[RMDB]
RNA sequence: GGGAACGACUCGAGUAGAGUCGAAAAGAUGUUAGAGACCUAGUCCGAGUCUGGGCAAGUGCUUAUCAGGGACCUUACUUGCUUGAACCCAUGAUCAAAGCAGUGGCACUAGCAGCUAUGUACAAUCCCUAUUAGAAAAUUUCGAUUUUCUAAUAGGAAAAGAAACAACAACAACAAC
Reactivity to 2A3 in 0.01 (KOAc 150mM, MgCl2 10mM, bicine 150mM(pH8.5), 24C), signal-to-noise 6, nucleotides 027 to 126: g060a030u110g050u150u070a040g020a010g020a120c010c010u030a040g080u020c030c020g020a040g090u030c070u160g000g010g000c020a040a020g060u020g050c020u070u080a060u140c040a040g040g010g060a090c030c000u070u090a060c040u080u140g110c010u040u070g060a090a090c010c010c010a110u070g020a030u080c110a060a070a020g010c010a040g040u090g030g000c010a010c090u020a010g000c020a010g000c020u060a040u200g060u030a040c050a030a060u080c010
Reactivity to DMS in 0.01 (KOAc 150mM, MgCl2 10mM, bicine 150mM(pH8.5), 24C), signal-to-noise 7, nucleotides 027 to 126: g010a070u020g010u020u010a020g000a300g020a300c000c020u000a110g000u000c020c010g000a110g020u010c050u010g030g000g000c010a040a050g000u010g020c060u000u040a070u010c070a070g010g000g000a120c110c040u020u020a050c060u030u010g030c090u000u010g010a080a110c010c010c020a100u020g000a050u030c180a060a060a070g010c030a040g010u020g000g010c060a300c040u000a070g020c040a020g020c020u010a070u010g020u010a070c120a080a120u040c090

Source: RMDB library OK1LIB, as collected in RNAgym. This 177-nucleotide RNA was probed chemically with 2A3 and DMS. Conditions: 150 mM KOAc, 10 mM MgCl2 and 150 mM bicine (pH 8.5), 24 C. For DMS, 13,953 sequencing reads were counted. Values cover nucleotides 27 to 126.